Chemical mapping of a 177-nucleotide RNA with 2A3. The reactions ran in a buffer of 150 mM KOAc, 10 mM MgCl2 and 150 mM bicine (pH 8.5), at 24 C. The 2A3 profile rests on 480 reads. Source: RMDB library RFM100, as collected in RNAgym.
RNA sequence: GGGAACGACUCGAGUAGAGUCGAAAAAGCGUCGAUUUACCGUGGUCAAUGUGAGCAAUGAUCGAAAAGUUACGUAUGUUCUUCAUAGAGAUAAAUUAUUAUGCCUUACGCCUGGUUGACCAGACUUACCCAUCGAACUCUUCGGAGUUCGAUGGGUAAAAGAAACAACAACAACAAC
Reactivity to 2A3 in 0.01 (KOAc 150mM, MgCl2 10mM, bicine 150mM(pH8.5), 24C), signal-to-noise 1, nucleotides 027 to 126: a000g000c040g080u000c000g000a000u000u000u220a160c060c180g190u030g000g000u030c000a000a100u090g000u050g080a190g030c000a000a140u100g000a000u000c000g110a020a020a020a020g070u150u000a030c000g120u220a040u020g050u000u000c020u030u180c000a300u050a170g020a000g010a100u300a080a030a000u020u040a070u100u080a020u220g080c000c060u000u020a020c000g000c000c000u000g000g010u120u000g070a040c000c000a000g020a000c010u050u050